[RMDB]
Structure probing data (DMS) for a 177-nucleotide construct. For DMS, 1,197 sequencing reads were counted. It was measured as part of the RMDB library OK2TST.
RNA sequence: GGGAACGACUCGAGUAGAGUCGAAAAUGAUAAUUGCGUUAACUGCACAAGUUGUUUAAACAAUAUGAAACCUGGGCACCUUGAAAAAAGAACAGGAUAACAGCAAUUUCAGGGAACAAGGGAGAUACUCAUGUUAGGUUUUCGAACCUAACAUGAGAAAAGAAACAACAACAACAAC
Reactivity to DMS in 0.01 (KOAc 150mM, MgCl2 10mM, bicine 150mM(pH8.5), 24C), signal-to-noise 2, nucleotides 027 to 126: u010g020a030u010a070a030u000u000g000c010g000u000u010a050a160c100u020g030c080a100c090a050a120g010u020u000g000u010u000u000a090a080a080c100a070a110u010a110u000g000a070a080a110c110c120u000g000g010g000c090a060c130c000u000u000g000a010a060a100a180a060a060g000a070a080c000a020g000g070a260u000a050a010c030a070g010c030a020a020u000u000u010c010a070g000g010g010a050a090c070a050a070g040g000g010a040g010a130u000a110
The RNA was probed in 150 mM KOAc, 10 mM MgCl2 and 150 mM bicine (pH 8.5) at 24 C. Values cover nucleotides 27 to 126.